[RMDB]
RNA sequence: GGGAACGACUCGAGUAGAGUCGAAAAUUGCCAACGACAACUUUGCUCCGGUGGCUGUCGCCGCGUAAGCGGUGCCAAAAACCGACCUAAAGUCCUAGCGGGUAGCACCGCAUAGGCGGGGUUCGGAAGAAAUAGCACUCUUCGGAGUGCUAUUUCUAAAAGAAACAACAACAACAAC
Reactivity to 2A3 in 0.01 (KOAc 150mM, MgCl2 10mM, bicine 150mM(pH8.5), 24C), signal-to-noise 3, nucleotides 027 to 126: u130u170g030c040c000a050a010c020g110a090c000a110a050c140u220u270u150g000c040u040c070c000g000g050u020g010g040c020u000g030u000c010g000c000c000g050c000g010u060a080a030g000c020g000g040u020g000c000c000a000a050a040a070a020c010c000g000a000c010c010u200a300a120a000g070u140c000c000u000a000g000c020g000g000g000u010a000g000c040a040c050c000g050c030a120u000a000g000g020c030g010g020g000g030u110u130c020g000g010a010
Reactivity to DMS in 0.01 (KOAc 150mM, MgCl2 10mM, bicine 150mM(pH8.5), 24C), signal-to-noise 1, nucleotides 027 to 126: u010u010g010c040c010a060a030c130g000a090c080a060a160c250u020u010u040g020c160u000c160c000g000g000u020g000g020c060u040g010u010c000g000c040c010g110c000g060u010a090a090g010c000g030g000u000g030c040c010a140a030a200a030a100c100c050g000a010c050c010u000a050a080a130g000u010c000c030u000a040g000c000g000g010g030u000a200g000c140a280c000c000g000c000a040u020a010g000g010c000g000g000g000g010u030u000c080g050g010a300
Background
Chemical mapping of a 177-nucleotide RNA with 2A3 and DMS. Source: RMDB library RFM100, as collected in RNAgym. Values cover nucleotides 27 to 126. 2A3 is a SHAPE reagent: it acylates the 2'-hydroxyl of flexible nucleotides of all four kinds. Conditions: 150 mM KOAc, 10 mM MgCl2 and 150 mM bicine (pH 8.5), 24 C.